[RMDB]
RNA sequence: GGGAACGACUCGAGUAGAGUCGAAAACGAUUAGCAUUCGUGCUAAUCGAAUCAGGUAGUACCUAUGUCUAUUACCUGUAGUGGCCAACGUCCGGACAGAGAAUCGAGUCCUGUUCGCAGGACUCAAAGUGCUAAGGUGUUUCGACACCUUAGCACUAAAAGAAACAACAACAACAAC
Reactivity to 2A3 in 0.01 (KOAc 150mM, MgCl2 10mM, bicine 150mM(pH8.5), 24C), signal-to-noise 2, nucleotides 027 to 126: c020g000a000u010u010a010g020c000a030u040u020c260g140u090g010c000u000a010a000u000c000g020a010a110u090c000a000g050g000u010a010g000u010a020c010c050u160a130u140g050u000c060u020a010u010u040a020c000c000u010g020u010a100g060u050g080g010c040c000a080a010c060g100u030c030c030g070g000a010c010a010g140a010g030a160a090u180c110g000a000g010u020c010c010u010g010u020u050c250g020c050a000g000g010a010c010u010c000a000a000
Reactivity to DMS in 0.01 (KOAc 150mM, MgCl2 10mM, bicine 150mM(pH8.5), 24C), signal-to-noise 2, nucleotides 027 to 126: c000g010a000u000u000a000g020c000a060u000u010c130g040u000g020c000u010a020a000u000c000g000a090a060u010c000a030g000g020u000a010g010u000a020c120c140u000a120u020g000u000c130u000a000u000u000a010c000c000u000g000u000a060g010u000g020g010c040c040a050a080c190g000u010c020c020g010g010a040c090a100g010a120g000a180a100u010c180g010a010g000u000c010c000u000g000u000u020c190g000c000a010g000g000a000c000u000c020a000a060
An RNA of 177 nucleotides, treated with 2A3 and DMS and read out base by base. Source: RMDB library M2PK50, as collected in RNAgym.